[RMDB]
RNA sequence: GGGAACGACUCGAGUAGAGUCGAAAAGAAGUACUGUUCGCAGUACUUCAAACGGCAACGGCAAGGCCAAGCCGAAGCCGAACGGCAAGCCGAAGGCCAAUAAAACCGUUCCCUUCGGGGAACGGAAGAUUAAAUUUAAGUUCGCUUAAAUUUAAUCAAAAGAAACAACAACAACAAC
Reactivity to DMS in 0.01 (KOAc 150mM, MgCl2 10mM, bicine 150mM(pH8.5), 24C), signal-to-noise 3, nucleotides 027 to 126: g000a000a000g010u000a010c000u010g010u000u000c200g020c000a000g000u000a010c000u000u000c000a040a080a120c010g000g000c000a040a300c020g000g000c000a060a110g000g010c050c060a220a140g000c000c010g010a030a300g020c000c010g000a030a080c200g000g000c080a080a090g000c010c030g000a120a070g010g020c020c020a080a100u000a050a050a130a100c000c020g020u000u000c000c000c010u000u010c140g010g000g010g010a000a000c000g000g010a010a020
Reactivity to 2A3 in 0.01 (KOAc 150mM, MgCl2 10mM, bicine 150mM(pH8.5), 24C), signal-to-noise 3, nucleotides 027 to 126: g010a000a000g010u000a010c000u010g050u040u110c240g000c120a000g000u000a000c000u000u000c010a000a000a000c020g010g000c010a030a010c010g000g010c020a060a130g080g000c020c010a020a010g000c000c010g000a000a010g010c010c000g020a100a030c040g050g000c040a030a060g080c020c030g120a110a060g030g000c000c010a020a020u150a050a060a010a040c010c000g000u000u000c000c000c000u000u020c190g070g000g000g000a000a000c000g000g020a000a000